[RMDB]
RNA sequence: GGGAACGACUCGAGUAGAGUCGAAAAGACUGGCACAGGGACGUUGGCAACGACGACCCAGUGCCGGAAAGUUCGUCAAACUUGGUCAUUUAGAGGAAGAAAAAGUCGUAACAAGGUUUCCGUAGGUGAGAACAGCUGCAUUCGUGCAGCUGUUCUCAAAAGAAACAACAACAACAAC
Reactivity to 2A3 in 0.01 (KOAc 150mM, MgCl2 10mM, bicine 150mM(pH8.5), 24C), signal-to-noise 1, nucleotides 027 to 126: g070a000c000u020g000g050c000a010c000a050g000g000g000a060c000g000u000u000g010g000c000a080a000c000g010a000c000g020a050c000c000c000a050g000u000g000c080c000g010g000a020a020a020g010u010u010c000g110u070c050a120a090a090c000u070u110g020g020u020c000a130u000u050u050a110g060a070g100g060a100a110g030a150a040a000a000a000g120u040c040g000u050a130a000c130a000a080g110g030u000u030u000c030c010g120u090a000g000g230u080